[RMDB]
RNA sequence: GGGAACGACUCGAGUAGAGUCGAAAAGCAAAUUAUCAGUUGCCAAUGAUGACAACUACGGUGCUCAACUAGCUGCGUAAGUAGCUUUUUGUUACACCAUCUAGCGGUACGCCGCUAGCGGUUUUUAACAAGGUGCCAGUACCGCGUUAACGACUGUACACUCUUGAUCGUUCGCGAUCAAGAGUGUAAAAGAAACAACAACAACAAC
Reactivity to 2A3 in 0.01 (KOAc 150mM, MgCl2 10mM, bicine 150mM(pH8.5), 24C), signal-to-noise 1, nucleotides 027 to 156: g030c030a070a000a150u170u050a090u300c060a010g030u030u050g070c010c010a100a080u270g100a140u230g040a090c000a020a000c000u200a020c080g000g000u040g010c020u000c010a000a070c030u040a000g020c000u040g000c010g070u170a200a150g020u000a050g020c000u000u000u000u020u040g030u000u110a040c030a010c000c000a030u030c000u000a000g000c000g000g050u020a000c190g050c010c000g000c000u000a010g000c030g040g000u000u020u000u000u020a010a000c030a010a040g030g000u010g240c180c020a020g050u060a030c000c010g060c020g030u060u010a030a010c020g090a000c060u060g030u000